RNA sequence: GGGAACGACUCGAGUAGAGUCGAAAAGCUAUGGUGCAACUCUUUAAGGCAAUAACGAACUAAUUCUAAGCAAGUAAUGGAGCAAUGCCAGGGUCACUAUCUAGCCAUAAUAGUGCUUGACAGUAUGAGAAUCUGCUACCCUUCGGGGUAGCAGAAACGGACUUAAUGCGUUCGCGCAUUAAGUCCGAAAAGAAACAACAACAACAAC
Reactivity to 2A3 in 0.01 (KOAc 150mM, MgCl2 10mM, bicine 150mM(pH8.5), 24C), signal-to-noise 1, nucleotides 027 to 156: g030c000u070a000u110g010g030u020g030c000a090a260c000u000c030u000u110u250a150a020g000g000c060a090a110u240a130a000c050g020a000a000c050u070a140a190u090u130c030u180a110a040g040c120a030a070g140u240a040a110u150g060g000a050g000c010a000a030u000g030c020c020a050g020g050g000u070c000a000c000u010a000u000c000u010a050g000c010c000a020u050a120a080u090a060g060u020g070c000u030u140g000a040c020a030g180u170a060u030g150a130g060a100a070u000c010u000g000c000u000a000c000c000c090u000u020c140g000g000g050g000u000a000g000c000a000g000a000a000a000